[RMDB]
RNA sequence: GGGAACGACUCGAGUAGAGUCGAAAAACGGGCAGUGGCGAUGGCAACGCGGCAGCCGCAGGGUCGACUUCUUCGCAGCCGCAACAGACGGGUGACGGGCAAAGAGGGGAGCUCGUUCUGUUGGAAGAGUCAUGAGCUAUUUCGAUAGCUCAUGACUAAAAGAAACAACAACAACAAC
Reactivity to DMS in 0.01 (KOAc 150mM, MgCl2 10mM, bicine 150mM(pH8.5), 24C), signal-to-noise 2, nucleotides 027 to 126: a080c080g010g010g010c010a100g010u000g000g010c030g000a060u040g000g000c060a140a030c090g070c060g000g000c060a160g000c040c000g030c070a080g000g030g010u000c030g010a050c120u010u010c060u020u010c120g000c030a110g000c020c020g010c010a080a070c020a020g000a080c030g000g020g000u000g000a120c080g000g000g000c070a070a100a070g010a160g000g000g000g030a220g020c020u000c000g010u010u030c010u000g050u020u000g000g000a110a060g000
Reactivity to 2A3 in 0.01 (KOAc 150mM, MgCl2 10mM, bicine 150mM(pH8.5), 24C), signal-to-noise 5, nucleotides 027 to 126: a000c030g000g020g020c050a060g030u050g070g000c030g060a090u090g070g000c000a050a040c060g020c000g050g010c030a010g030c020c020g030c030a040g040g010g010u040c030g020a060c010u040u010c000u050u050c050g010c040a020g030c010c010g010c010a010a020c010a020g040a010c010g020g000g020u050g030a040c020g000g060g020c040a070a130a010g080a090g020g030g010g010a010g000c010u000c010g030u070u010c020u000g010u010u020g030g040a100a030g040
Notes: Chemical mapping of a 177-nucleotide RNA with DMS and 2A3. For DMS the reverse transcriptase was MarathonRT. It was measured as part of the RMDB library OK1LIB. For DMS, 3,247 sequencing reads were counted.